Structure probing data (DMS and 2A3) for a 177-nucleotide construct. The DMS profile rests on 1,100 reads. The RNA was probed in 150 mM KOAc, 10 mM MgCl2 and 150 mM bicine (pH 8.5) at 24 C. Source: RMDB library OK2TST, as collected in RNAgym. As a SHAPE reagent, 2A3 marks flexible, mostly unpaired nucleotides at the ribose 2'-OH. Reactivities are given for positions 27 through 126. For DMS the reverse transcriptase was MarathonRT.
[RMDB]
RNA sequence: GGGAACGACUCGAGUAGAGUCGAAAAGACUUACUGGCUUAUUUGCGAGUAUUGACCAAUCAGGAUGAUGACAGCGCAUUCUUACGUAUCGUGAAUACCCCAAAGCGCGAGAUAGGUUCUGCGACGAGAACCACUACGCAUUCGUGCGUAGUGGUUCAAAAGAAACAACAACAACAAC
Reactivity to DMS in 0.01 (KOAc 150mM, MgCl2 10mM, bicine 150mM(pH8.5), 24C), signal-to-noise 2, nucleotides 027 to 126: g000a170c040u000u000a050c030u000g000g020c010u000u010a120u000u000u010g010c010g010a040g010u000a010u000u000g000a100c130c070a090a140u010c150a150g000g000a060u010g010a040u020g000a140c100a110g000c050g030c030a050u010u000c060u000u000a070c110g040u010a050u010c050g010u000g000a030a040u000a100c090c030c010c070a040a080a110g000c060g000c010g000a010g000a090u020a070g010g000u000u000c050u000g010c070g000a150c140g000a150
Reactivity to 2A3 in 0.01 (KOAc 150mM, MgCl2 10mM, bicine 150mM(pH8.5), 24C), signal-to-noise 1, nucleotides 027 to 126: g000a000c040u050u040a080c040u110g050g000c000u040u110a130u240u300u050g040c010g070a000g020u020a090u010u050g120a050c060c000a000a070u020c020a020g000g000a040u070g010a020u070g040a060c040a070g020c070g000c030a070u050u050c020u010u000a010c010g020u040a080u130c010g000u050g090a100a050u120a140c000c010c000c050a040a100a040g000c050g000c000g000a020g020a030u170a030g050g010u070u000c010u130g090c020g030a070c020g060a030